Background:
An RNA of 177 nucleotides, treated with DMS and 2A3 and read out base by base.

RNA sequence: GGGAACGACUCGAGUAGAGUCGAAAACACCAUAGAAUAUUGGGUUCUGUUUAGGGAGAAGAUAAAGCUGGUUGAAGACAACGACACCUUUGAUACAACCGUCGCUUGUUUUUGACCAGAUCGUGUGCAAUGUCUUUGAUUUCGAUCAAAGACAUUGAAAAGAAACAACAACAACAAC
Reactivity to DMS in 0.01 (KOAc 150mM, MgCl2 10mM, bicine 150mM(pH8.5), 24C), signal-to-noise 9, nucleotides 027 to 126: c110a180c030c010a100u030a060g010a100a050u010a090u010u010g000g010g010u000u000c030u000g010u020u010u020a080g000g000g000a080g000a110a070g000a070u010a070a070a110g010c010u000g000g010u000u000g000a010a010g000a010c010a010a020c010g010a020c010a110c170c140u020u020u030g020a170u030a100c260a070a100c260c160g010u000c010g010c260u000u000g010u000u010u000u000u000g000a020c000c010a000g000a010u010c090g010u010g010u020g010
Reactivity to 2A3 in 0.01 (KOAc 150mM, MgCl2 10mM, bicine 150mM(pH8.5), 24C), signal-to-noise 9, nucleotides 027 to 126: c060a030c020c020a040u110a060g170a130a060u150a150u220u130g100g010g020u060u040c030u050g140u110u110u120a090g010g090g010a060g020a120a050g030a090u150a140a140a020g040c010u000g000g010u000u000g010a010a000g010a000c000a010a000c010g010a010c010a060c010c040u120u090u200g150a150u190a150c080a080a050c090c050g010u010c010g030c160u000u010g000u000u000u000u000u000g000a000c000c000a000g000a010u020c010g040u040g020u030g090
Source: RMDB libraries RFM100 and RFMREP, as collected in RNAgym.